[RMDB]
RNA sequence: GGGAACGACUCGAGUAGAGUCGAAAAUGAGACACCUUCGGGUGUCUCACAUUAAGCUGACCAGCUAUGAGGUCAAUAUCGUCAUGGACAAAUAGAAUAAAACAGCUUGCUCCUUCGGGAGCAAGAAGAAUAGCGCAAAGUUCGCUUUGCGCUAUUCAAAAGAAACAACAACAACAAC
Reactivity to DMS in 0.01 (KOAc 150mM, MgCl2 10mM, bicine 150mM(pH8.5), 24C), signal-to-noise 2, nucleotides 027 to 126: u000g000a000g000a000c000a010c000c010u000u000c190g020g050g030u000g000u000c000u010c000a020c070a070u010u000a050a130g020c120u000g000a030c000c020a180g020c010u010a040u000g000a060g010g000u010c020a080a080u010a020u020c120g010u020c050a010u000g000g000a100c300a080a050a120u010a050g020a050a030u010a050a020a070a110c240a110g000c000u010u010g000c000u000c000c000u020u010c230g010g000g000a010g020c010a000a000g000a070a060
Reactivity to 2A3 in 0.01 (KOAc 150mM, MgCl2 10mM, bicine 150mM(pH8.5), 24C), signal-to-noise 2, nucleotides 027 to 126: u050g000a010g000a020c020a000c010c010u020u040c160g030g010g010u000g010u000c000u000c010a000c000a000u090u060a070a020g080c030u000g020a000c010c010a010g030c020u050a060u110g050a040g030g030u040c050a100a140u210a110u150c150g030u000c020a060u050g030g030a050c030a030a170a060u170a090g110a070a080u130a190a120a030a030c040a010g030c000u000u000g010c000u010c020c000u030u040c220g070g010g000a000g000c010a000a000g000a000a000
About this RNA
Structure probing data (DMS and 2A3) for a 177-nucleotide construct. The reactions ran in a buffer of 150 mM KOAc, 10 mM MgCl2 and 150 mM bicine (pH 8.5), at 24 C.